[RMDB]
RNA sequence: GGGAACGACUCGAGUAGAGUCGAAAAAUCAGGAGAAACGACUAGAAUUGUCUAAGCUGUCGAAGGAAGAGCGGUUAACAAUGGAGUCGCACUUGCCGAAAAACCAGCCAGGUGCACGCGGGGUGGAUGACCGUCGCGUGAUUCGGGCAUCAUCCACGGUAUCACACGGAUUCGUCCGUGUGAUACCAAAAGAAACAACAACAACAAC
Reactivity to 2A3 in 0.01 (KOAc 150mM, MgCl2 10mM, bicine 150mM(pH8.5), 24C), signal-to-noise 1, nucleotides 027 to 156: a000u090c010a040g060g010a020g010a000a020a030c010g010a050c060u030a040g120a250a140u100u010g030u030c020u070a050a000g020c010u030g110u230c190g090a070a030g050g070a000a030g050a000g030c070g000g010u020u080a010a010c000a020a020u100g090g000a050g020u030c000g010c000a050c000u020u040g010c020c030g040a090a110a060a030a060c010c080a000g020c020c030a000g080g010u040g020c000a000c070g000c010g010g070g000g000u020g150g000a000u010g020a010c090c000g010u010c020g020c010g090u030g020a020u150u080c010g040g000g000c020a040u080c000a000u000c030c000a010c060